[RMDB]
Chemical mapping of a 207-nucleotide RNA with 2A3 and DMS.
RNA sequence: GGGAACGACUCGAGUAGAGUCGAAAACGACUGCUUCGGCAGUCGAUUAAGGGGUCUUUGACGAGGACUUGACAUGCUCUGAAGCCUCCACGGAGCAACAGCAAGUCUACCCACCGUCGGAGACGGAGGCACCCAACUACGUGCAUUCGUGCACGAACUAUAAGAAAUGGUUCGCCAUUUCUUAUAGAAAAGAAACAACAACAACAAC
Reactivity to 2A3 in 0.01 (KOAc 150mM, MgCl2 10mM, bicine 150mM(pH8.5), 24C), signal-to-noise 8, nucleotides 027 to 156: c010g000a000c000u010g020c000u040u060c180g150g000c000a000g000u000c000g000a000u020u070a110a080g120g010g030g000u000c010u010u010u020g010a010c000g040a120g060g020a020c000u020u020g040a080c030a130u140g000c000u000c010u020g060a100a030g020c010c000u000c010c010a010c010g010g010a000g040c020a030a070c060a060g240c020a050a010g010u000c030u090a120c050c040c030a040c030c000g000u010c000g020g010a020g010a010c010g010g010a020g010g000c020a050c000c000c000a040a080c070u200a090c020g010u000g010c000a020u030u110c190g110u080g010c010a000c000g000a020a020
Reactivity to DMS in 0.01 (KOAc 150mM, MgCl2 10mM, bicine 150mM(pH8.5), 24C), signal-to-noise 3, nucleotides 027 to 156: c000g020a020c010u010g020c000u000u010c300g020g000c010a020g030u000c010g000a030u010u010a080a090g000g020g050g020u000c010u010u000u010g010a030c020g010a170g040g010a040c030u000u000g030a060c070a300u010g010c000u010c000u000g000a060a180g020c050c030u030c000c030a300c040g000g020a030g000c020a060a070c100a140g010c010a030a050g010u000c030u000a030c030c020c030a300c090c000g010u000c010g000g000a050g000a030c010g010g010a080g050g030c020a160c040c010c010a050a080c100u010a100c000g000u000g020c010a110u010u020c270g030u010g020c000a020c000g000a030a240

Conditions: 150 mM KOAc, 10 mM MgCl2 and 150 mM bicine (pH 8.5), 24 C.